An RNA of 207 nucleotides, treated with DMS and 2A3 and read out base by base. For 2A3 the reverse transcriptase was SuperScript II with manganese. The reactions ran in a buffer of 150 mM KOAc, 10 mM MgCl2 and 150 mM bicine (pH 8.5), at 24 C.
RNA sequence: GGGAACGACUCGAGUAGAGUCGAAAACCCCAUGGAAUGGAUAUAAUAGAGGGAAGCUCAUGGGGCUGUGGAGAUGAUUCCCUGACAAACACAUUUAAAGUCUCAGUGAGGAUAGGCUGUUAGAAUUGGGUUGGACCCAUUGCGGUAAGCUCCCUGAUACAGCUAAAGGGUUCGCCCUUUAGCUGUAAAAAGAAACAACAACAACAAC
Reactivity to DMS in 0.01 (KOAc 150mM, MgCl2 10mM, bicine 150mM(pH8.5), 24C), signal-to-noise 2, nucleotides 027 to 156: c020c000c010c030a120u000g000g000a080a140u000g020g030a090u000a080u000a080a170u010a180g010a090g030g020g010a030a070g020c060u000c020a070u010g010g050g020g060c060u000g060u000g010g000a090g020a090u010g000a230u000u000c010c020c060u000g020a150c050a060a080a090c070a150c040a130u000u010u010a070a070a140g040u020c030u000c040a090g000u000g010a100g010g010a180u010a060g020g020c020u010g060u010u000a090g010a050a070u000u000g000g010g000u010u000g050g000a240c010c000c020a260u000u000g010c020g030g000u010a090a170g030c040u000c010c020c020u000g000a300
Reactivity to 2A3 in 0.01 (KOAc 150mM, MgCl2 10mM, bicine 150mM(pH8.5), 24C), signal-to-noise 2, nucleotides 027 to 156: c030c000c000c000a030u080g040g040a110a030u090g030g000a020u040a060u050a300a150u200a190g030a040g020g030g020a100a050g070c030u020c050a020u040g030g050g000g000c090u050g100u120g040g030a100g010a060u100g000a000u050u030c010c000c000u000g010a010c010a050a150a010c030a010c050a090u100u130u250a140a100a020g050u010c020u010c050a050g030u060g050a020g000g040a030u080a090g040g000c030u030g020u020u020a030g080a180a160u150u080g000g010g020u000u070g010g010a030c000c000c000a070u050u240g020c080g000g000u050a010a060g020c000u080c000c000c000u000g010a060

The 2A3 profile rests on 608 reads. For DMS the reverse transcriptase was MarathonRT.